[RMDB]
RNA sequence: GGGAACGACUCGAGUAGAGUCGAAAACGGGGCUAUCUGAAAUUUUUGUGGACUCGGCUAACCACCCCCCACCCCAUUCUGGGACUGCCAAGUGAUUACGGAGCUAACGGAAGACCCCUCCGACAUCGACUUUACUGUAGUUCGCUACAGUAAAGUCAAAAGAAACAACAACAACAAC
Reactivity to 2A3 in 0.01 (KOAc 150mM, MgCl2 10mM, bicine 150mM(pH8.5), 24C), signal-to-noise 1, nucleotides 027 to 126: c020g000g000g000g000c010u080a050u100c010u060g080a110a280a160u190u150u040u100u160g020u000g000g040a050c050u000c090g050g070c090u040a050a000c010c000a040c030c030c000c000c000c020a060c000c000c000c000a010u170u090c040u070g040g000g110a100c070u040g040c060c010a090a030g000u030g140a180u040u130a010c010g000g040a020g070c020u050a100a090c020g080g060a050a020g140a200c000c040c000c000u020c020c000g030a040c000a090u080c030
Reactivity to DMS in 0.01 (KOAc 150mM, MgCl2 10mM, bicine 150mM(pH8.5), 24C), signal-to-noise 2, nucleotides 027 to 126: c100g040g000g020g020c050u000a030u010c080u000g000a060a130a150u010u000u000u000u010g020u030g000g010a060c070u000c090g010g010c070u020a080a130c050c020a140c010c010c000c010c000c010a230c080c020c010c020a150u010u010c110u010g020g030g000a100c070u000g000c030c020a020a090g000u000g000a100u000u000a060c080g000g000a070g000c070u020a070a200c080g010g000a050a200g000a110c020c010c020c030u000c020c020g000a130c160a050u010c090